RNA sequence: GGGAACGACUCGAGUAGAGUCGAAAAGUCUACGUCGACCGAGCGUCCGUGCCAAGCGCUACGUCACCAGGGGAUAACUGUCGGAAGGCGGUUAGUCCCGGGUGCAUAAGGAGUCGUGGAUGGUUCAGGACCGAAAGGUAGCAGACAAAAGCGACCGCCCAAUCAUGAUCUUCGGAUCAUGAUUGGGAAAAGAAACAACAACAACAAC
Reactivity to 2A3 in 0.01 (KOAc 150mM, MgCl2 10mM, bicine 150mM(pH8.5), 24C), signal-to-noise 1, nucleotides 027 to 156: g030u000c000u040a070c040g030u040c010g070a050c060c000g030a040g080c110g020u000c000c000g000u050g000c000c010a060a050g000c050g000c020u090a040c060g110u130c000a000c010c000a050g090g010g000g000a000u010a020a010c000u000g000u000c000g100g220a140a140g000g020c000g030g000u000u020a040g120u080c000c000c000g000g010g000u010g010c020a040u040a050a160g150g000a070g040u210c040g010u040g020g170a160u090g010g040u040u030c210a220g010g020a010c000c010g060a100a050a010g010g000u040a040g070c100a020g010a030c020a010a110a010a000g080c070g030a050c010c010g050